[RMDB]
RNA sequence: GGGAACGACUCGAGUAGAGUCGAAAACCCCCGUUCCCCCAUUAAAACUAAAUGAUUCUGGGCAGCUAACUCUGCAAACAGGACCAGGGUUAAAAACAAUAGGAGAAACAUUACAAGUCCCUGUGGGUGUAGGAAUUAGCAUUAACAACAGCGGGGCAUUACCAUACAAAUUCGUUUGUAUGGUAAUAAAAGAAACAACAACAACAAC
Reactivity to DMS in 0.01 (KOAc 150mM, MgCl2 10mM, bicine 150mM(pH8.5), 24C), signal-to-noise 2, nucleotides 027 to 156: c030c000c000c000c020g040u000u000c010c010c000c070c080a160u000u000a040a090a110a200c040u010a070a130a100u010g020a080u010u000c010u000g010g010g050c030a050g030c040u010a080a060c080u010c020u000g000c010a040a080a140c010a030g020g020a030c080c020a100g010g010g020u020u000a010a060a060a090a050c020a120a140u000a120g020g000a160g000a150a040a080c080a080u010u000a080c060a060a160g010u000c020c000c010u010g030u000g050g000g000u010g000u020a060g030g000a090a080u010u000a070g020c040a230u000u000a070a040c030a050a000c000a120g020c030g000g000g060g060c060
Reactivity to 2A3 in 0.01 (KOAc 150mM, MgCl2 10mM, bicine 150mM(pH8.5), 24C), signal-to-noise 1, nucleotides 027 to 156: c000c000c000c000c000g000u010u000c000c030c020c010c010a040u040u070a000a060a040a040c070u110a240a100a040u070g030a010u060u010c000u030g040g020g000c000a010g000c020u010a000a090c000u010c010u030g000c000a010a300a000c040a060g020g020a020c030c000a000g090g010g010u060u130a050a080a140a050a000c060a050a080u070a060g040g000a050g110a010a160a030c030a020u080u300a020c020a080a020g050u050c000c000c000u020g000u050g050g080g000u060g050u010a000g010g090a030a020u120u080a050g010c000a040u100u110a050a090c070a070a000c000a030g060c000g000g000g000g050c010
Record summary:
An RNA of 207 nucleotides, treated with DMS and 2A3 and read out base by base. For DMS the reverse transcriptase was MarathonRT. Reactivities are given for positions 27 through 156. For 2A3 the reverse transcriptase was SuperScript II with manganese. The reactions ran in a buffer of 150 mM KOAc, 10 mM MgCl2 and 150 mM bicine (pH 8.5), at 24 C.